This 177-nucleotide RNA was probed chemically with DMS. The reactions ran in a buffer of 150 mM KOAc, 10 mM MgCl2 and 150 mM bicine (pH 8.5), at 24 C. Values cover nucleotides 27 to 126. DMS adducts were read by reverse transcription with MarathonRT. Source: RMDB library OK2TST, as collected in RNAgym.
[RMDB]
RNA sequence: GGGAACGACUCGAGUAGAGUCGAAAAGGAGCGCAUUCUCAAUGAGCCAGUAGAACUUGAGGCCGAUCCAUCGCGCCGCGAACGCAAAAAAAUUCAGCAAUGGUACUACCGGGCUGACGACAUCAAAUACCCCACGAUUAUUCGUAAUCGUGGGGUAAAAAGAAACAACAACAACAAC
Reactivity to DMS in 0.01 (KOAc 150mM, MgCl2 10mM, bicine 150mM(pH8.5), 24C), signal-to-noise 1, nucleotides 027 to 126: g030g000a020g000c060g050c050a080u000u000c030u000c000a090a110u000g000a020g000c000c030a100g000u000a040g060a070a110c080u000u030g000a140g080g020c060c020g000a110u010c090c080a080u010c080g000c080g000c100c040g030c180g020a060a100c090g080c080a000a000a010a040a110a110a090u000u000c080a050g000c010a150a060u000g010g050u000a130c150u000a040c000c030g070g000g050c000u000g000a070c150g000a030c040a080u030c100a090a040a110